[RMDB]
Structure probing data (2A3 and DMS) for a 177-nucleotide construct.
For DMS the reverse transcriptase was MarathonRT.
The DMS profile rests on 53,186 reads.
RNA sequence: GGGAACGACUCGAGUAGAGUCGAAAACUGCUCAUCAGGGGACACGCUCCCUUACUCAUGGCAGCCAUGUUUGAUUGUCACAGAGCCCCCCGAAUACUCUGUCUAUAGUGACACACUGUAGGUGUCAAUUUCUUGUGAUAUUCGUAUCACAAGAAAUAAAAGAAACAACAACAACAAC
Reactivity to 2A3 in 0.01 (KOAc 150mM, MgCl2 10mM, bicine 150mM(pH8.5), 24C), signal-to-noise 9, nucleotides 027 to 126: c010u030g010c030u040c080a100u040c040a040g060g010g010g020a010c050a030c240g070c080u030c000c000c000u020u040a040c030u030c020a020u030g020g000c010a010g010c020c020a120u140g170u070u080u090g160a190u030u080g050u050c020a030c030a080g010a020g000c000c000c000c000c010c030g030a050a020u100a110c040u040c020u060g040u020c020u070a080u040a090g080u050g060a040c000a010c010a010c100u120g090u180a050g010g080u030g010u020c000a020
Reactivity to DMS in 0.01 (KOAc 150mM, MgCl2 10mM, bicine 150mM(pH8.5), 24C), signal-to-noise 9, nucleotides 027 to 126: c040u010g000c030u020c060a070u020c160a070g010g000g000g010a050c070a120c210g010c100u000c030c010c010u000u010a040c130u020c130a120u010g000g010c020a030g000c060c040a080u010g010u010u020u010g010a100u010u010g010u000c040a040c060a070g010a050g010c040c030c020c010c020c030g000a080a080u020a100c050u000c030u010g000u010c040u010a040u010a060g010u010g000a070c060a030c030a070c070u010g010u020a060g010g010u000g000u010c040a060
Source: RMDB library OK1LIB, as collected in RNAgym.